[RMDB]
RNA sequence: GGGAACGACUCGAGUAGAGUCGAAAAUGAAGUAGAGGCUUCAGAUUUAGAAGAAGGUGAAUCAGAGUGCAUUUCUGAGACUUCAACUGAACAAGUUGACGUUUCUCAUGAGACUUCUGACGACGAGAAAGCUAUCGGUUCGCCGAUAGCAAAAGAAACAACAACAACAAC
Reactivity to 2A3 in 0.01 (KOAc 150mM, MgCl2 10mM, bicine 150mM(pH8.5), 24C), signal-to-noise 9, nucleotides 027 to 129: u060g010a010a010g010u080a050g030a060g100g060c000u040u030c020a030g020a150u120u120u130a070g010a090a010g020a030a030g060g070u100g060a040a050u030c020a000g010a010g040u080g050c100a110u030u090u020c030u030g000a000g010a000c000u010u000c000a000a000c000u020g040a080a040c110a210a020g000u000u000g000a000c010g020u060u160u040c000u000c000a020u140g000a010g020a030c000u060u010c010u050g030a020c040g010a010c050g010a000g090a070a060a000
Reactivity to DMS in 0.01 (KOAc 150mM, MgCl2 10mM, bicine 150mM(pH8.5), 24C), signal-to-noise 8, nucleotides 027 to 129: u010g030a040a000g070u000a000g000a120g000g000c030u020u030c010a070g010a110u030u000u040a080g010a030a070g000a070a040g060g000u000g030a130a090u020c030a000g020a000g040u030g000c170a060u030u050u030c070u020g020a020g020a040c030u010u000c010a000a050c010u000g010a050a030c230a080a020g020u010u010g020a030c060g020u020u020u010c020u010c080a030u020g030a070g010a030c060u030u040c000u000g010a000c110g000a100c060g000a050g040a070a100a090